[RMDB]
Chemical mapping of a 207-nucleotide RNA with DMS and 2A3.
RNA sequence: GGGAACGACUCGAGUAGAGUCGAAAAAUGGCGAAUGCAUGGGGAACUACAUCUGUGUCGCGAGUUCGAUUCUCGCCAGGGCCUGGUCCUGUAGCUCAGUUGGUAGAGCAAGCUGUUGCCCGGACACAAAAUCCAGCUAGGUUCGCCUAGCUGGAAACUAAUCCCUCAACUUCGGUUGAGGGAUUAGAAAAGAAACAACAACAACAAC
Reactivity to DMS in 0.01 (KOAc 150mM, MgCl2 10mM, bicine 150mM(pH8.5), 24C), signal-to-noise 2, nucleotides 027 to 156: a090u000g030g010c020g010a030a000u000g020c020a090u050g020g030g000g000a090a150c020u000a020c050a030u000c030u010g030u000g020u020c030g000c010g000a070g050u000u000c060g000a300u000u000c000u000c040g030c030c040a110g020g020g040c050c070u000g060g000u050c040c070u010g010u000a040g040c020u000c000a070g010u010u010g050g030u000a130g010a050g000c030a170a140g000c000u000g010u000u000g000c030c010c030g000g040a170c080a100c050a050a000a050a090u000c020c000a020g010c020u000a020g020g030u000u000c300g010c000c000u010a000g000c000u010g000g000a000a010a050
Reactivity to 2A3 in 0.01 (KOAc 150mM, MgCl2 10mM, bicine 150mM(pH8.5), 24C), signal-to-noise 2, nucleotides 027 to 156: a000u050g040g010c040g060a090a030u080g030c070a070u080g000g000g020g010a050a060c020u090a040c040a050u020c030u030g080u030g040u080c040g000c000g000a010g010u030u070c030g040a080u110u000c020u000c000g000c010c020a020g000g000g010c030c130u130g050g000u000c020c000u010g040u100a010g010c010u020c010a040g070u100u120g110g050u120a030g000a010g040c020a030a030g020c050u030g010u060u030g000c030c020c050g040g020a040c050a010c000a100a090a010a030u030c000c000a000g020c010u000a000g010g020u030u080c150g080c040c000u000a000g020c000u000g000g010a000a000a000
The RNA was probed in 150 mM KOAc, 10 mM MgCl2 and 150 mM bicine (pH 8.5) at 24 C. Values cover nucleotides 27 to 156.